Structure probing data (2A3) for a 207-nucleotide construct. For 2A3 the reverse transcriptase was SuperScript II with manganese. The RNA was probed in 150 mM KOAc, 10 mM MgCl2 and 150 mM bicine (pH 8.5) at 24 C. High 2A3 reactivity points to a flexible backbone, as in loops and unpaired stretches.
RNA sequence: GGGAACGACUCGAGUAGAGUCGAAAAGAGCACCAGUACGCUCGUAAAUCCACUGGAAAACUAUAAACGCCAACGACGAGCGUUUCGCUCUAGCCGCUUAAGGCUGGGCCACUGCACUAAUUUGUCUUUGGGUUAGGUAGGGCAACCUACAGCAGUGCCAGGGACUGUAGUUCGCUACAGUCCCUGGAAAAGAAACAACAACAACAAC
Reactivity to 2A3 in 0.01 (KOAc 150mM, MgCl2 10mM, bicine 150mM(pH8.5), 24C), signal-to-noise 1, nucleotides 027 to 156: g000a000g000c000a000c030c000a000g000u020a010c000g000c000u000c000g020u070a030a010a000u030c010c000a020c040u000g010g000a050a080a010a030c100u090a030u150a260a120a000c000g000c030c050a120a050c100g200a040c070g030a070g040c030g000u060u060u040c040g000c000u020c020u060a010g000c000c000g070c150u200u210a150a030g000g020c000u000g000g020g010c000c000a020c000u020g000c000a010c040u010a040a080u000u070u070g180u160c050u020u080u260g040g040g000u050u020a020g000g000u000a020g000g000g020c020a050a080c000c000u000a000c010a030g000c000a000g020u020g000